[RMDB]
RNA sequence: GGGAACGACUCGAGUAGAGUCGAAAACGUGGCUUUCGAGCCACGAAAAAAUCCUAAGUCGAUUGGAGUGAGAUAAAGACAACAGCUCGGAAACGAGACAUGUCUGAAGCUCACUAUGAAGAUCGAUAUGGAAAAAAGGAUUCGUUCGCGAAUCCAAGAUUACGCUUGAAUUCGUUCAAGCGUAAUCAAAAGAAACAACAACAACAAC
Reactivity to 2A3 in 0.01 (KOAc 150mM, MgCl2 10mM, bicine 150mM(pH8.5), 24C), signal-to-noise 3, nucleotides 027 to 156: c030g000u000g000g010c020u060u120u170c140g030a010g000c010c000a000c000g010a010a000a000a000a000a000u040c010c000u060a160a010g030u000c000g000a000u000u020g040g020a020g010u010g000a000g000a010u010a040a060a000g010a000c010a080a010c050a080g030c010u010c010g020g030a090a070a050c020g010a000g080a070c070a110u060g000u000c010u000g010a120a000g040c000u000c010a000c000u000a010u020g020a040a030g010a000u000c040g010a000u010a050u110g020g100a050a110a040a060a070a120g000g000a000u020u010c010g010u040u140c290g000c000g170a000a000u000c000c000a000a020
Reactivity to DMS in 0.01 (KOAc 150mM, MgCl2 10mM, bicine 150mM(pH8.5), 24C), signal-to-noise 2, nucleotides 027 to 156: c010g040u000g000g000c000u020u000u000c300g030a050g030c000c000a000c010g000a010a030a070a110a110a130u010c000c000u000a130a250g020u000c000g000a060u000u000g000g020a010g000u010g010a020g020a030u000a250a100a070g000a030c010a010a140c090a170g030c040u000c000g020g000a120a130a200c010g000a030g020a040c080a300u000g000u000c010u000g000a120a070g000c000u000c000a020c000u000a090u000g030a080a300g000a030u000c000g000a010u000a260u000g000g020a000a010a060a070a140a070g000g000a050u010u000c000g000u020u000c190g030c020g010a070a090u010c010c000a020a220